[RMDB]
RNA sequence: GGGAACGACUCGAGUAGAGUCGAAAAGCCGAUGAAUUGCCGAGAAGCCUGGCUCGAAAUCGGCGACGCAUCGACGACGGUCCUGCCAUGAGACCGUAACGAGGACAUGUCGCCUCGAAUGGCGUCGUAUAACAUGAGUGGUUCGCCACUCAUGUAAGCAUCCAUAUGCUUUCGAGCAUAUGGAUGCAAAAGAAACAACAACAACAAC
Reactivity to 2A3 in 0.01 (KOAc 150mM, MgCl2 10mM, bicine 150mM(pH8.5), 24C), signal-to-noise 3, nucleotides 027 to 156: g030c000c000g020a000u040g000a040a130u090u140g030c030c020g040a040g040a220a030g050c050c170u130g050g000c040u050c010g060a110a040a030u010c000g010g000c020g020a010c030g010c000a120u080c010g030a030c010g010a020c000g000g000u000c010c040u080g200c030c030a120u060g060a050g010a180c010c000g010u030a030a030c010g000a020g010g030a020c020a090u270g030u160c090g040c020c030u000c000g040a070a060u100g020g060c020g010u060c020g000u170a160u030a240a020c000a000u000g000a000g000u000g060g000u070u050c160g000c070c000a000c000u020c000a000u000g010u000a000a000
The data come from the RNA Mapping Database (RMDB), library M2RFPK. This 207-nucleotide RNA was probed chemically with 2A3. The reactions ran in a buffer of 150 mM KOAc, 10 mM MgCl2 and 150 mM bicine (pH 8.5), at 24 C. Reactivities are rounded to 0.1 and cut off at 0 and 3.